[RMDB]
RNA sequence: GGGAACGACUCGAGUAGAGUCGAAAAGAGCGGAAGUCAGUGUCCGAUGAUUAAUGACGAUAGAUUUACUCUGAAAAGAAAGUAUCAAAUCGAUAGUGUAGAGUCGACAAUGAAAAUGGAUAAGAAGCUUGAGGAAGAUAUUCGUAUCUUCCUCAAGAAAAGAAACAACAACAACAAC
Reactivity to 2A3 in 0.01 (KOAc 150mM, MgCl2 10mM, bicine 150mM(pH8.5), 24C), signal-to-noise 4, nucleotides 027 to 126: g120a000g020c070g040g050a040a020g050u060c030a010g040u030g010u120c040c060g020a030u040g020a010u050u110a130a070u110g060a040c030g020a030u060a060g040a000u040u010u060a020c020u020c020u070g030a050a050a030a000g060a020a130a010g060u060a030u100c030a030a100a110u020c010g010a050u100a080g060u100g020u060a050g010a010g060u020c030g000a010c020a020a030u060g040a040a040a050a030u130g060g030a030u090a140a100g110a090a020g080
Reactivity to DMS in 0.01 (KOAc 150mM, MgCl2 10mM, bicine 150mM(pH8.5), 24C), signal-to-noise 6, nucleotides 027 to 126: g010a100g020c050g010g010a090a100g010u000c060a050g010u010g000u000c050c060g020a050u000g010a180u010u000a100a070u000g000a160c060g010a060u000a090g000a060u010u000u000a040c060u000c010u000g000a080a060a140a050g000a040a070a090g010u010a040u000c060a040a080a080u000c040g020a040u010a130g010u010g000u000a050g020a220g010u000c030g010a040c060a040a050u000g000a010a050a060a100u010g000g000a070u010a080a110g010a130a130g000